[RMDB]
RNA sequence: GGGAACGACUCGAGUAGAGUCGAAAAAAUGCGUGUUUUCAAGAUCUUAAAGAGAAUCUAUCAUACUCUUCUAACAAUAGUAUACUCAGAUCGCACAUUAACGGUGGCUCUGGGUUUCCAGGACCCACCCCAAGAGUAGAUUCGUCUACUCUUGGGGAAAAGAAACAACAACAACAAC
Reactivity to 2A3 in 0.01 (KOAc 150mM, MgCl2 10mM, bicine 150mM(pH8.5), 24C), signal-to-noise 2, nucleotides 027 to 126: a000a000u270g010c060g000u080g050u020u000u070u210c070a080a040g020a040u000c020u110u210a130a130a040g040a000g010a060a110u030c040u040a090u110c110a030u040a180c030u020c030u250u050c070u120a120a030c020a030a090u080a090g070u060a020u030a110c000u000c020a000g000a040u050c060g130c110a010c020a050u060u160a110a030c120g110g000u020g010g030c010u000c000u040g040g000g000u020u020u050c010c000a010g020g040a070c000c010c010a050
Reactivity to DMS in 0.01 (KOAc 150mM, MgCl2 10mM, bicine 150mM(pH8.5), 24C), signal-to-noise 2, nucleotides 027 to 126: a080a040u000g010c050g050u010g000u000u010u000u010c070a120a080g000a080u000c040u010u000a100a090a070g010a080g010a070a040u010c090u010a080u000c050a120u010a070c050u000c040u010u000c130u000a030a080c140a060a070u000a060g010u000a040u000a050c010u010c050a030g000a040u010c060g000c030a050c050a070u000u010a060a050c240g020g030u010g020g000c130u010c030u030g010g000g010u000u010u010c020c000a110g010g010a110c010c000c040a160